The data come from the RNA Mapping Database (RMDB), library OK2TST. Structure probing data (2A3 and DMS) for a 177-nucleotide construct. The DMS profile rests on 3,532 reads. For DMS the reverse transcriptase was MarathonRT. Conditions: 150 mM KOAc, 10 mM MgCl2 and 150 mM bicine (pH 8.5), 24 C. In probing experiments dimethyl sulfate is read out at A N1 and C N3, which are open when not base-paired.
RNA sequence: GGGAACGACUCGAGUAGAGUCGAAAAGAAACACUGACUCCUGUGGAGAUGACUUGGCACCACUCUCCUUUCACAGAGCAGAGUCUGAAUAGUCUUCAGAGAUAGGCCUGUGGGCCAGAUUGCCAUCCUUAUCGGGAUUUUUCGAAAUCCCGAUAAGAAAAGAAACAACAACAACAAC
Reactivity to 2A3 in 0.01 (KOAc 150mM, MgCl2 10mM, bicine 150mM(pH8.5), 24C), signal-to-noise 3, nucleotides 027 to 126: g020a000a090a010c060a030c080u060g180a110c030u060c030c010u060g030u080g020g000a020g000a030u030g000a010c020u020u030g010g000c020a010c010c000a030c060u010c000u010c000c000u010u120u100c050a050c010a020g060a030g040c010a010g010a020g110u010c000u020g020a020a040u090a090g110u000c020u020u010c020a040g010a040g020a200u050a080g050g010c030c010u030g010u110g040g000g000c000c000a040g030a100u080u190g000c000c000a020u030c020
Reactivity to DMS in 0.01 (KOAc 150mM, MgCl2 10mM, bicine 150mM(pH8.5), 24C), signal-to-noise 4, nucleotides 027 to 126: g020a140a060a110c100a100c050u010g010a090c030u000c040c060u000g030u010g000g000a050g000a040u000g010a060c090u000u000g010g000c020a220c240c110a050c130u010c020u010c010c000u010u010u000c040a060c040a030g000a120g020c020a010g000a170g000u010c020u000g000a030a030u000a170g000u010c250u000u000c010a020g000a050g020a080u000a130g010g010c000c000u000g000u010g020g020g000c070c060a020g000a110u000u010g020c020c020a070u010c090